Chemical mapping of a 177-nucleotide RNA with DMS and 2A3.
Source: RMDB library OK2TST, as collected in RNAgym.
RNA sequence: GGGAACGACUCGAGUAGAGUCGAAAAGUCUUGCUCUGUCACUCAGGAUGGAAUGCAGUAGUGUUGUGAUCAUAGCUUACUGCAGCCUCGAACUCCUGGGCUCAAAUGAUCCAAAGCAUUGGGAUUACGACUUAUCAGUGUUCGCACUGAUAAGUCGAAAAGAAACAACAACAACAAC
Reactivity to DMS in 0.01 (KOAc 150mM, MgCl2 10mM, bicine 150mM(pH8.5), 24C), signal-to-noise 3, nucleotides 027 to 126: g030u010c030u000u010g010c030u000c060u000g000u000c140a190c020u000c030a010g000g020a060u010g020g010a110a100u000g030c010a020g000u000a010g000u010g030u000u000g030u000g020a130u010c130a070u000a100g010c000u000u000a020c000u000g040c010a020g010c110c080u000c120g000a080a100c230u000c010c020u010g000g010g000c170u000c070a050a090a100u000g010a000u000c060c070a050a060a120g010c070a070u010u000g010g010g000a100u000u010a150
Reactivity to 2A3 in 0.01 (KOAc 150mM, MgCl2 10mM, bicine 150mM(pH8.5), 24C), signal-to-noise 2, nucleotides 027 to 126: g020u000c020u060u060g000c030u030c030u080g100u060c010a010c020u000c010a010g010g020a020u040g040g070a150a080u040g000c000a010g020u020a040g080u020g020u120u110g090u090g100a110u130c070a020u090a070g000c010u030u070a020c020u010g000c000a020g040c020c010u040c010g000a040a050c030u000c000c000u000g000g020g000c010u030c010a100a120a040u130g020a010u050c020c000a130a020a020g100c050a110u060u140g060g010g010a050u100u070a100
As a SHAPE reagent, 2A3 marks flexible, mostly unpaired nucleotides at the ribose 2'-OH.